[RMDB]
RNA sequence: GGGAACGACUCGAGUAGAGUCGAAAAUCAUACCUUCACCAGCGCGACCUGGUCCUCCACGAGCUGGCCCGCGGCCGCGAGCUCAGCUUUUACCUUCCCGCCCACCUCCUCGCGCAGGUACACCGAAGACAAGUCUGAGGUUCGCCUCAGACUUGUCAAAAGAAACAACAACAACAAC
Reactivity to DMS in 0.01 (KOAc 150mM, MgCl2 10mM, bicine 150mM(pH8.5), 24C), signal-to-noise 1, nucleotides 027 to 126: u000c160a070u000a150c000c030u000u000c090a060c050c040a100g020c040g020c080g000a070c120c050u010g000g010u000c040c050u000c040c020a030c200g000a030g010c020u000g020g010c020c050c030g020c050g000g000c240c140g000c030g030a010g020c010u050c030a060g010c010u010u010u000u010a090c090c070u020u010c040c000c010g020c060c010c040a120c030c010u000c040c030u010c030g030c050g020c010a050g000g000u010a100c150a070c060c040g000a090a110
Conditions: 150 mM KOAc, 10 mM MgCl2 and 150 mM bicine (pH 8.5), 24 C. An RNA of 177 nucleotides, treated with DMS and read out base by base.